[RMDB]
RNA sequence: GGGAACGACUCGAGUAGAGUCGAAAAUUUCACAUUUUUGUAAAGCUUACAGAACUCAGGGAAAAUAUGAGAUCCAAUAGGAGUCCUAUCGUGCUUCUUUAACACUAGUGUAACAACAUCUCUGGGAGUGUUAUCAAUGUUUCGACAUUGAUAACACAAAAGAAACAACAACAACAAC
Reactivity to DMS in 0.01 (KOAc 150mM, MgCl2 10mM, bicine 150mM(pH8.5), 24C), signal-to-noise 3, nucleotides 027 to 126: u000u000u000c020a050c090a100u000u000u000u000u020g010u000a020a100a160g010c190u000u000a070c090a070g000a060a100c020u000c020a080g000g000g000a040a060a060a070u010a060u020g000a050g010a080u010c030c040a090a100u020a070g010g000a150g000u000c040c020u000a080u000c150g010u000g000c050u000u000c040u000u000u010a070a090c090a060c090u000a090g000u010g000u000a120a080c110a090a070c120a110u000c050u000c010u000g000g000g000a190
Reactivity to 2A3 in 0.01 (KOAc 150mM, MgCl2 10mM, bicine 150mM(pH8.5), 24C), signal-to-noise 3, nucleotides 027 to 126: u030u070u070c020a030c030a110u090u080u040u140u070g080u060a130a160a070g100c010u040u100a040c020a080g130a140a050c010u020c030a010g000g000g050a000a120a110a010u180a120u110g080a090g020a060u010c050c040a080a100u070a150g060g000a040g020u060c010c020u130a100u180c030g080u070g040c000u040u000c000u040u090u090a080a010c040a030c090u060a090g070u000g030u120a070a040c050a020a000c020a080u000c010u000c010u020g000g020g060a100